[RMDB]
RNA sequence: GGGAACGACUCGAGUAGAGUCGAAAAGCCGACGCUGUUUUACGUGCCAGCAUUCUGGACAGUUUGGGCACCCUGGAACAUCAGGACGGCAACAGUGAAAGCGCCCUGGAGCUGUAUACCCGGGCACCGUAGGUGCUUCAUUCGUGAAGCACCUACGAAAAGAAACAACAACAACAAC
Reactivity to DMS in 0.01 (KOAc 150mM, MgCl2 10mM, bicine 150mM(pH8.5), 24C), signal-to-noise 9, nucleotides 027 to 126: g020c010c010g010a300c120g010c050u000g000u000u000u000u010a080c220g020u000g010c020c010a120g000c140a080u000u000c040u000g000g010a080c120a060g010u000u000u000g010g000g010c030a080c060c040c060u000g000g000a070a070c100a090u000c040a040g010g010a130c080g010g010c080a050a070c050a060g010u000g000a090a130a130g000c050g000c030c020c010u000g010g010a140g010c050u010g000u000a110u010a110c030c010c020g000g010g020c060a020c100
Reactivity to 2A3 in 0.01 (KOAc 150mM, MgCl2 10mM, bicine 150mM(pH8.5), 24C), signal-to-noise 7, nucleotides 027 to 126: g020c000c000g000a030c040g000c020u010g050u010u040u050u150a050c040g000u030g020c020c010a060g100c050a150u100u040c020u080g050g120a070c050a110g010u030u060u050g020g000g000c010a020c000c010c020u020g030g050a190a090c030a120u160c030a030g030g050a040c020g050g000c030a030a020c010a040g030u050g100a170a050a020g070c030g000c030c010c010u020g040g020a040g020c070u050g100u250a100u090a110c000c010c030g020g020g010c010a010c040